[RMDB]
RNA sequence: GGGAACGACUCGAGUAGAGUCGAAAACUCUGAGUGGCAGUUGCAGAUCCGCAUUCCAGUGUUAAUUCUGCCUGGAUGUUUUCAGAGGGAAGAGUUGGCUUCCAACAGCUGUUUAACAGUCACGAUGUAACCUCUAAGGAAUAGUUAACUAAACGCAGAGUACUACUAGUUUCGACUAGUAGUACUCAAAAGAAACAACAACAACAAC
Reactivity to 2A3 in 0.01 (KOAc 150mM, MgCl2 10mM, bicine 150mM(pH8.5), 24C), signal-to-noise 5, nucleotides 027 to 156: c050u060c040u060g030a020g070u040g030g010c020a030g000u060u040g020c010a020g020a140u050c040c030g050c010a040u220u120c010c020a030g030u020g040u250u220a220a220u270u080c110u120g020c000c010u020g000g000a020u000g060u050u090u110u140c090a110g030a060g090g010g030a000a030g010a010g030u010u010g030g020c050u020u030c020c000a040a040c030a050g050c010u020g090u070u120u150a040a030c010a010g040u030c040a030c080g000a010u070g020u070a040a070c030c020u050c060u090a050a060g020g010a060a050u070a110g060u070u090a080a080c070u060a080a070a030c090g040c150a040
Reactivity to DMS in 0.01 (KOAc 150mM, MgCl2 10mM, bicine 150mM(pH8.5), 24C), signal-to-noise 2, nucleotides 027 to 156: c040u000c030u010g030a160g060u000g030g040c060a100g020u000u000g000c050a100g020a170u000c030c000g070c030a110u000u000c010c030a090g040u000g000u000u000a080a200u000u000c130u010g030c020c020u000g000g030a060u010g000u010u010u000u000c070a050g000a100g020g000g010a070a020g010a160g000u000u010g010g020c040u000u010c020c000a110a130c050a110g040c010u000g000u000u000u000a100a100c040a060g020u000c010a110c020g000a150u000g010u000a080a110c030c010u000c030u000a090a130g000g010a070a060u000a090g020u000u010a060a100c050u000a040a060a060c070g000c100a150